An RNA of 207 nucleotides, treated with DMS and 2A3 and read out base by base. It was measured as part of the RMDB library M2RFPK. 2A3 adducts were read by reverse transcription with SuperScript II with manganese. Values cover nucleotides 27 to 156. For DMS, 3,019 sequencing reads were counted. The 2A3 profile rests on 1,723 reads.
RNA sequence: GGGAACGACUCGAGUAGAGUCGAAAAAACUCUUUAAGGCAAUAACGAACUAAUUCUAAGCAAGUAAUGGAGAAAGGCCAGGGUCACUAUCUAGCCAUAAUAGUGCUUGACAGUAUGAUACUAACUGAAUAUGGUAAACCGUUCGCGGUUUACCAAAGUGAUUGAGUAAGUUCGCUUACUCAAUCACAAAAGAAACAACAACAACAAC
Reactivity to DMS in 0.01 (KOAc 150mM, MgCl2 10mM, bicine 150mM(pH8.5), 24C), signal-to-noise 2, nucleotides 027 to 156: a010a050c010u000c030u010u000u000a060a100g000g000c020a080a080u010a070a070c050g010a100a080c060u000a090a090u020u000c080u010a090a110g060c040a100a050g020u000a050a050u020g000g000a070g020a120a060a100g020g010c020c030a070g020g020g010u000c030a060c030u000a030u000c040u000a100g020c030c050a080u010a070a070u000a090g020u000g030c040u000u000g030a060c020a040g020u000a020u010g020a070u000a050c050u000a060a090c060u000g030a080a090u000a130u000g000g010u000a000a020a030c020c010g030u000u000c300g020c040g060g000u000u000u000a000c010c000a000a000a030
Reactivity to 2A3 in 0.01 (KOAc 150mM, MgCl2 10mM, bicine 150mM(pH8.5), 24C), signal-to-noise 3, nucleotides 027 to 156: a000a000c110u100c010u020u130u050a100a000g020g000c000a070a060u130a160a050c050g040a010a020c060u090a080a060u130u060c040u160a070a000g040c050a060a000g020u130a030a100u080g040g000a080g010a060a070a020g030g000c050c040a010g020g020g000u040c020a010c010u030a040u060c010u020a010g030c000c010a020u070a170a030u080a140g110u090g010c000u020u050g010a030c000a020g100u080a100u170g060a050u110a140c060u080a140a080c020u050g030a060a050u190a100u210g000g010u000a000a000a000c010c000g030u050u080c120g000c000g060g020u000u000u000a000c000c000a000a010a000